[RMDB]
RNA sequence: GGGAACGACUCGAGUAGAGUCGAAAAAAGUUACACCGUAUUAGCCUGAGUCUUUUAGUCGUAGGUGUUGGCUUUGCAGCUUUAGGGAUCGCUCUUGCUAUUGUAGGUACUGUAGUUUUAGGAGGAAUCCAUGGAUUUUAUUCGUAAAAUCCAUGGAAAAAGAAACAACAACAACAAC
Reactivity to 2A3 in 0.01 (KOAc 150mM, MgCl2 10mM, bicine 150mM(pH8.5), 24C), signal-to-noise 4, nucleotides 027 to 126: a000a010g060u070u040a030c030a010c000c010g050u070a130u070u070a080g040c020c020u030g050a040g070u190c040u070u220u040u110a050g020u030c080g030u040a040g000g030u020g030u050u040g040g020c000u060u050u080g000c030a010g020c000u110u080u180a070g050g060g020a050u050c010g000c050u000c010u050u060g010c010u020a030u110u100g040u070a040g080g010u060a050c030u050g010u050a040g030u070u010u080u120a060g030g050a030g030g050a060a030
Reactivity to DMS in 0.01 (KOAc 150mM, MgCl2 10mM, bicine 150mM(pH8.5), 24C), signal-to-noise 7, nucleotides 027 to 126: a050a050g010u000u000a060c050a090c030c010g010u010a090u000u000a180g010c040c020u000g000a090g010u000c040u000u010u010u000a060g020u000c070g020u000a080g010g010u000g010u000u010g010g010c020u010u000u000g010c120a070g010c050u000u000u000a090g020g000g010a070u000c080g010c030u000c030u010u010g010c040u000a050u010u000g020u000a070g010g010u000a050c080u010g010u000a050g010u000u000u000u000a100g010g010a080g010g010a110a150

This 177-nucleotide RNA was probed chemically with 2A3 and DMS. Conditions: 150 mM KOAc, 10 mM MgCl2 and 150 mM bicine (pH 8.5), 24 C. Source: RMDB library OK2TRN, as collected in RNAgym.